[RMDB]
An RNA of 177 nucleotides, treated with 2A3 and DMS and read out base by base. Values cover nucleotides 27 to 126. It was measured as part of the RMDB library OK2TRN. For 2A3, 1,745 sequencing reads were counted.

RNA sequence: GGGAACGACUCGAGUAGAGUCGAAAAGCGUCGCGAAGGCACCUGGGUCGAACUGGGCCUCGGCCUCGGCGCCGCGGUGCUCGGCCUGCUGGUGCUGUGGCUGAGCGCCCGCGGCGUGACCCGGCCACCUAUUACCUGGCUUCGGCCAGGUAAUAGGAAAAGAAACAACAACAACAAC
Reactivity to 2A3 in 0.01 (KOAc 150mM, MgCl2 10mM, bicine 150mM(pH8.5), 24C), signal-to-noise 1, nucleotides 027 to 126: g040c010g020u030c020g000c020g100a190a150g040g020c040a060c070c030u090g000g000g020u010c010g030a110a070c070u090g080g090g010c010c020u010c010g000g000c010c000u010c040g000g000c060g000c030c010g010c050g000g010u020g000c020u010c010g010g000c010c010u080g040c070u260g130g160u300g080c120u090g040u060g050g000c000u010g010a000g000c010g000c000c000c040g040c020g000g010c010g000u000g000a000c000c000c000g050g000c010c010a020
Reactivity to DMS in 0.01 (KOAc 150mM, MgCl2 10mM, bicine 150mM(pH8.5), 24C), signal-to-noise 1, nucleotides 027 to 126: g010c020g030u000c020g000c040g020a100a190g010g030c020a050c040c010u000g000g010g010u000c020g030a090a080c020u000g030g000g010c110c060u010c070g010g000c010c000u010c300g000g020c000g040c000c000g050c120g010g000u000g030c010u000c030g000g000c000c000u010g050c030u000g020g030u010g000c010u000g020u000g020g010c000u000g000a030g010c000g000c010c000c020g020c020g010g000c020g010u000g000a030c000c000c040g010g000c070c100a150